[RMDB]
RNA sequence: GGGAACGACUCGAGUAGAGUCGAAAACAUACUAUGAUUUCAUUCAUGCAAAGUUCAGAAAGGAGGCAGACCCCUCUCAGAAGUCAGAGGAGUGUUUCCCUCAAGGAAGAGUGCUAGUUAUUGACAGAUCCUUGGUGCAUUUCGAUGCACCAAGGAUAAAAGAAACAACAACAACAAC
Reactivity to DMS in 0.01 (KOAc 150mM, MgCl2 10mM, bicine 150mM(pH8.5), 24C), signal-to-noise 2, nucleotides 027 to 126: c030a120u000a100c170u000a110u000g000a060u000u000u010c090a050u000u000c060a050u010g010c000a050a070a120g010u000u000c060a060g000a140a160a160g000g010a010g020g020c190a060g010a110c100c030c000c010u000c020u000c100a140g000a060a080g000u010c130a010g000a000g000g010a080g020u000g010u000u000u020c250c000c010u010c080a100a100g030g000a120a070g000a040g040u000g010c020u000a060g000u000u000a060u010u000g020a070c230a080g040
Reactivity to 2A3 in 0.01 (KOAc 150mM, MgCl2 10mM, bicine 150mM(pH8.5), 24C), signal-to-noise 1, nucleotides 027 to 126: c030a000u200a020c030u110a010u100g040a100u090u150u080c020a020u050u000c010a010u220g010c050a070a030a140g050u100u000c000a020g100a030a070a010g070g000a010g050g000c010a010g040a150c000c020c040c000u000c000u020c010a100g070a250a020g070u100c030a000g020a000g000g040a170g030u210g000u020u000u040c000c000c010u000c040a050a040g070g010a030a060g000a040g020u050g050c010u030a030g030u120u160a160u140u070g000a050c070a020g140

Annotation:
This 177-nucleotide RNA was probed chemically with DMS and 2A3. DMS adducts were read by reverse transcription with MarathonRT. The reactions ran in a buffer of 150 mM KOAc, 10 mM MgCl2 and 150 mM bicine (pH 8.5), at 24 C.